[RMDB]
RNA sequence: GGGAACGACUCGAGUAGAGUCGAAAAGACGCCUAAUGGCGAAAAUGUAAAAUCAACUACACUCAAGAUAAAUACAAGUGCUAAAUCUCGUAACUAGUUGAUCUAGUCCAGCGGUGAGAUCCGCAGAAAUUACCCGAGCAUUCGUGCUCGGGUAAUUAAAAGAAACAACAACAACAAC
Reactivity to 2A3 in 0.01 (KOAc 150mM, MgCl2 10mM, bicine 150mM(pH8.5), 24C), signal-to-noise 3, nucleotides 027 to 126: g050a000c010g010c000c030u240a300a230u230g010g000c010g110a080a000a010a080u200g090u180a060a050a000a010u010c000a000a030c000u050a020c000a000c060u030c020a040a000g000a070u080a030a180a000u260a090c090a140a070g050u040g200c020u070a130a110a090u030c060u000c000g020u030a040a010c000u000a000g020u010u050g000a020u010c020u010a030g100u040c040c040a000g000c000g000g000u020g040a030g070a100u040c000c000g070c020a000g050a060
Reactivity to DMS in 0.01 (KOAc 150mM, MgCl2 10mM, bicine 150mM(pH8.5), 24C), signal-to-noise 2, nucleotides 027 to 126: g070a170c020g010c020c000u000a200a070u050g000g030c000g000a010a050a070a060u040g000u020a010a040a120a010u000c000a000a080c020u010a020c240a300c100u020c050a090a010g020a050u000a050a090a120u010a040c230a200a000g020u080g000c070u000a040a070a040u050c010u000c030g000u020a070a150c110u000a010g010u000u000g040a060u000c010u000a060g000u000c020c000a000g010c030g000g010u000g020a130g020a040u000c000c000g090c010a140g000a050

This 177-nucleotide RNA was probed chemically with 2A3 and DMS. Conditions: 150 mM KOAc, 10 mM MgCl2 and 150 mM bicine (pH 8.5), 24 C. 2A3 adducts were read by reverse transcription with SuperScript II with manganese. For DMS, 1,992 sequencing reads were counted. Values cover nucleotides 27 to 126. It was measured as part of the RMDB library OK1LIB.